[RMDB]
RNA sequence: GGGAACGACUCGAGUAGAGUCGAAAAAGGGCCGCGGUGCUCUGGAGUAGAGGCUCUGCCUUCGAAACACCAUCGAUCGUCCCUUCUUCUUUACCUCCUUCUGGCUCUUCCGAUGAGACGCGACCGGUGGCAUCACCUCUCGGUUCGUCCCAACCUGCAAAUAUAAGUGGUUCGCCACUUAUAUUUGAAAAGAAACAACAACAACAAC
Reactivity to DMS in 0.01 (KOAc 150mM, MgCl2 10mM, bicine 150mM(pH8.5), 24C), signal-to-noise 2, nucleotides 027 to 156: a040g000g010g070c100c020g020c100g000g000u000g010c040u000c020u010g030g020a240g020u000a150g010a130g030g000c010u020c140u020g010c070c010u000u000c000g010a300a230a280c000a040c080c010a070u000c010g040a100u000c000g000u000c000c020c010u000u000c050u000u000c040u000u010u000a080c070c020u000c040c030u000u000c020u010g010g010c040u000c040u000u000c030c030g000a200u010g010a080g000a080c010g030c080g010a060c030c050g020g030u000g010g000c030a150u000c080a120c010c000u000c030u000c010g020g010u010u000c020g010u000c010c000c010a080a140c110c050u010g020
Reactivity to 2A3 in 0.01 (KOAc 150mM, MgCl2 10mM, bicine 150mM(pH8.5), 24C), signal-to-noise 6, nucleotides 027 to 156: a000g010g000g000c030c000g030c010g020g000u000g000c010u000c000u010g010g000a000g010u010a010g000a010g000g010c030u080c240u300g070c070c010u190u190c010g020a000a000a000c010a030c100c040a000u010c000g090a300u040c010g010u010c010c000c000u020u000c010u010u010c000u030u050u100a070c010c020u020c010c000u060u050c040u080g030g000c020u030c000u120u000c040c020g090a140u120g040a050g020a060c020g010c050g090a050c030c040g000g020u030g020g040c050a110u130c030a060c020c010u030c020u060c010g030g000u040u030c020g010u000c000c010c010a050a090c010c030u080g020